RNA sequence: GGGAACGACUCGAGUAGAGUCGAAAAGCAGUUUCACUCACGAUAGACUCUUGAGGAAGAGUGUCUGUAUUGCUUCCUCAAGCAAUACAUUACGGUAUGCCAAUACUGUAAUAGACAGCAGAUUGGCAUCUGCUCUAUCUCAUGAAACUGGUGAGUCAUUAAUUUAUCCAUUCGUGGAUAAAUUAAUAAAAGAAACAACAACAACAAC
Reactivity to 2A3 in 0.01 (KOAc 150mM, MgCl2 10mM, bicine 150mM(pH8.5), 24C), signal-to-noise 9, nucleotides 027 to 156: g080c050a010g000u000u000u010c020a020c020u050c010a020c060g080a130u050a080g030a080c030u010c010u030u040g060a040g050g080a040a020g010a000g010u040g040u030c060u050g030u010a020u000u030g010c000u040u040c050c080u130c100a010a000g000c000a000a000u010a010c010a020u070u120a040c060g040g020u150a020u010g050c010c010a030a030u100a240c060u000g010u060a040a070u060a130g160a050c060a030g000c000a000g010a030u020u040g040g000c020a010u010c010u020g000c000u000c000u010a070u020c000u000c010a020u040g020a030a050a040c020u030g050g030u030g020a010g050u040c030
Reactivity to DMS in 0.01 (KOAc 150mM, MgCl2 10mM, bicine 150mM(pH8.5), 24C), signal-to-noise 4, nucleotides 027 to 156: g030c020a030g020u000u000u000c000a130c030u000c060a090c160g010a090u010a050g010a090c040u000c000u000u020g010a190g010g010a080a020g010a040g030u000g010u000c150u000g020u000a030u000u000g010c000u000u000c060c140u000c080a050a070g010c040a020a030u000a010c020a220u000u000a040c050g020g010u010a010u000g020c190c160a090a080u000a030c000u000g000u000a050a110u010a130g010a100c050a070g020c020a040g000a170u000u000g010g010c110a160u000c040u000g000c030u000c010u000a040u000c010u000c050a070u000g010a010a010a030c020u010g000g020u010g010a130g000u000c110